Notes
An RNA of 207 nucleotides, treated with 2A3 and read out base by base. Source: RMDB library M2RFPK, as collected in RNAgym. 2A3 is a SHAPE reagent: it acylates the 2'-hydroxyl of flexible nucleotides of all four kinds.
RNA sequence: GGGAACGACUCGAGUAGAGUCGAAAAAGACCCGGAUACGUCCGGCUCAACGGGGGAUACGUGUGGUGCCGUCCGCUCCCCCUAUGGCAUAACAAAUGCACCACACACUAGGCUACGGCCUAGUGAAAAAAGGUGUAUGUGUUCGCACAUACACCAACACAUACUUCGGCUUCGGCCGAAGUAUGUGAAAAGAAACAACAACAACAAC
Reactivity to 2A3 in 0.01 (KOAc 150mM, MgCl2 10mM, bicine 150mM(pH8.5), 24C), signal-to-noise 2, nucleotides 027 to 156: a000g120a050c030c020c020g000g000a010u010a020c120g050u000c020c000g000g000c040u010c070a090a080c070g000g010g000g030g000a010u040a100c000g000u030g000u000g080g000u000g010c000c030g040u030c030c050g050c050u060c000c000c000c040c030u010a100u200g110g010c120a120u110a250a060c020a060a090a010u060g000c000a000c000c000a000c000a000c000a000c010u000a000g000g000c000u010a020c200g070g010c000c000u000a000g000u020g060a070a010a000a000a000a010g000g020u000g000u000a000u000g000u010g000u000u060c220g030c100a000c000a010u000a000c000a000c000c000a000a000